[RMDB]
Overview: The record gives the reactivity of an RNA of 207 nucleotides to DMS and 2A3. The RNA was probed in 150 mM KOAc, 10 mM MgCl2 and 150 mM bicine (pH 8.5) at 24 C. For 2A3 the reverse transcriptase was SuperScript II with manganese. For DMS, 1,846 sequencing reads were counted. The data come from the RNA Mapping Database (RMDB), library OK3TST.
RNA sequence: GGGAACGACUCGAGUAGAGUCGAAAACGCUCACACCUAAAUCCAAAGAACUUUUGUUCUCUUAUUGUGCUUGUAGAAUGCACUCAGAUUCUCUCAACGCCAUUUGUGUCAUAGUUACCGCUAAAGAAAAGAACAGCAGCCAUAGACAACCUAUAAAUAAUACUAGUGGGUUCGCCCACUAGUAUUAAAAAGAAACAACAACAACAAC
Reactivity to DMS in 0.01 (KOAc 150mM, MgCl2 10mM, bicine 150mM(pH8.5), 24C), signal-to-noise 1, nucleotides 027 to 156: c060g000c010u010c030a190c050a110c030c030u000a070a100a120u010c030c050a090a070a120g010a050a030c020u000u000u000u000g010u000u000c030u000c040u010u000a090u010u010g020u010g020c060u000u010g030u000a070g000a050a050u000g030c040a080c050u010c100a090g000a100u000u010c010u000c030u000c010a080a040c050g050c040c020a110u000u000u020g000u010g040u010c010a080u000a030g030u000u000a100c030c020g060c020u000a060a080a160g020a110a090a110a110g040a100a060c030a070g080c020a060g000c040c020a100u000a020g010a140c030a040a130c050c010u000a140u000a050a090a140
Reactivity to 2A3 in 0.01 (KOAc 150mM, MgCl2 10mM, bicine 150mM(pH8.5), 24C), signal-to-noise 3, nucleotides 027 to 156: c020g010c010u040c010a080c000a010c000c010u050a080a050a040u110c060c010a120a040a030g010a010a050c040u110u110u200u250g020u060u010c030u000c000u010u110a030u040u160g010u030g010c030u010u040g010u030a010g020a080a040u060g060c030a040c090u090c030a040g000a080u050u000c020u000c000u000c010a060a020c050g010c020c000a040u000u010u110g080u040g030u020c000a020u030a030g030u040u050a060c020c000g000c040u040a080a080a020g050a030a080a040a000g060a040a010c010a020g060c010a000g030c000c010a030u060a090g060a020c010a020a000c010c010u100a070u220a140a030a200